[RMDB]
RNA sequence: GGGAACGACUCGAGUAGAGUCGAAAAUAUUACUGUGUCACCACUAAGGCUAAGUCCGUUCAACAAGAUCUUGACGUUAUUUUGCCUGGUGAGUUUUCCAAGAAGCAGUUAGGACUGCUCCAACCUAGCAUGAAAGAAUCUUCGGAUUCUUUCAUGCAAAAGAAACAACAACAACAAC
Reactivity to 2A3 in 0.01 (KOAc 150mM, MgCl2 10mM, bicine 150mM(pH8.5), 24C), signal-to-noise 2, nucleotides 027 to 126: u120a050u130u060a120c050u060g080u050g030u220c010a010c020c030a000c040u120a170a050g020g000c010u010a010a000g000u010c000c010g100u140u120c020a020a040c040a130a080g050a270u050c010u030u040g020a010c000g020u070u110a020u030u050u050u050g030c020c010u000g000g000u020g020a090g020u030u030u040u000c010c000a030a040g050a080a020g000c000a000g000u010u040a040g020g110a090c010u000g030c020u070c010c000a000a040c000c000u010a020
Reactivity to DMS in 0.01 (KOAc 150mM, MgCl2 10mM, bicine 150mM(pH8.5), 24C), signal-to-noise 2, nucleotides 027 to 126: u000a150u010u000a050c140u000g000u000g000u000c060a060c090c010a090c060u020a100a060g000g040c030u000a040a030g000u000c300c030g000u010u000c020a010a020c220a140a060g010a110u010c110u000u000g000a030c000g010u010u030a020u000u000u000u000g010c010c020u000g000g020u010g010a130g010u020u020u000u000c000c000a070a180g020a050a050g020c000a030g010u000u000a080g000g010a210c040u010g000c010u000c030c030a060a120c050c040u000a090